Structure probing data (DMS) for a 177-nucleotide construct. The DMS profile rests on 1,165 reads. The RNA was probed in 150 mM KOAc, 10 mM MgCl2 and 150 mM bicine (pH 8.5) at 24 C.

[RMDB]
RNA sequence: GGGAACGACUCGAGUAGAGUCGAAAAGGCCUGGGCGCCGAGCCCGGGGAAACGUUGAUGCUGUUGGGCGACACCCGCGACGAGUUCGACGGUUCCGUGUGGGCGCAGGUGACCGCAGACCACCUGGAAAGGGGUCUAAGUUCGCUUAGACCCCUUUAAAAGAAACAACAACAACAAC
Reactivity to DMS in 0.01 (KOAc 150mM, MgCl2 10mM, bicine 150mM(pH8.5), 24C), signal-to-noise 1, nucleotides 027 to 126: g000g020c010c000u010g050g000g000c000g020c080c050g000a230g020c010c010c010g020g000g010g000a030a020a010c030g020u000u000g000a030u020g010c030u020g000u000u020g010g020g010c070g020a190c230a300c100c070c030g020c010g000a070c050g000a080g020u000u010c010g020a020c010g000g000u000u010c020c000g020u000g040u000g050g000g030c020g000c120a170g000g000u000g000a120c040c000g000c030a010g020a040c030c010a170c010c030u000g020g010